[RMDB]
RNA sequence: GGGAACGACUCGAGUAGAGUCGAAAAAAAAAAUAGAUCGUUCUAUUAACGAUCUCGCGCGGGUCGUCGGUGCUCGGCGAGCCCACGGACGAACUUACUCGCGCGUAAGUUAAUAAAUCGCCAAAAAACAUGCAAUUAUGUUCGCAUAAUUGCAUGUAAAAGAAACAACAACAACAAC
Reactivity to DMS in 0.01 (KOAc 150mM, MgCl2 10mM, bicine 150mM(pH8.5), 24C), signal-to-noise 3, nucleotides 027 to 126: a000a010a060a060a030a050u020a010g010a020u000c000g010u000u010c220u000a100u010u000a020a000c010g010a030u000c030u000c010g010c010g010c000g020g000g000u000c010g000u000c060g000g020u010g030c040u010c040g000g010c040g010a080g000c050c050c030a020c070g020g000a050c040g000a110a080c150u020u010a100c010u000c000g010c020g010c010g010u010a040a080g020u000u000a040a070u000a020a040a040u000c030g010c020c020a010a050a050a080a090
Reactivity to 2A3 in 0.01 (KOAc 150mM, MgCl2 10mM, bicine 150mM(pH8.5), 24C), signal-to-noise 3, nucleotides 027 to 126: a000a000a000a000a000a050u120a010g010a010u000c010g010u040u010c080u150a300u300u220a050a000c000g000a010u000c010u000c010g000c010g010c020g000g000g010u120c000g000u010c070g050g030u110g020c030u040c080g050g000c010g010a000g000c000c020c000a020c010g030g020a010c020g000a060a020c030u160u170a030c000u070c020g000c000g000c010g000u000a030a010g020u010u040a050a020u050a090a110a030u020c000g000c000c000a100a120a000a010a000
Source: RMDB library M2PK90, as collected in RNAgym.
An RNA of 177 nucleotides, treated with DMS and 2A3 and read out base by base.
The DMS profile rests on 3,920 reads.
The 2A3 profile rests on 3,748 reads.
Reactivities are given for positions 27 through 126.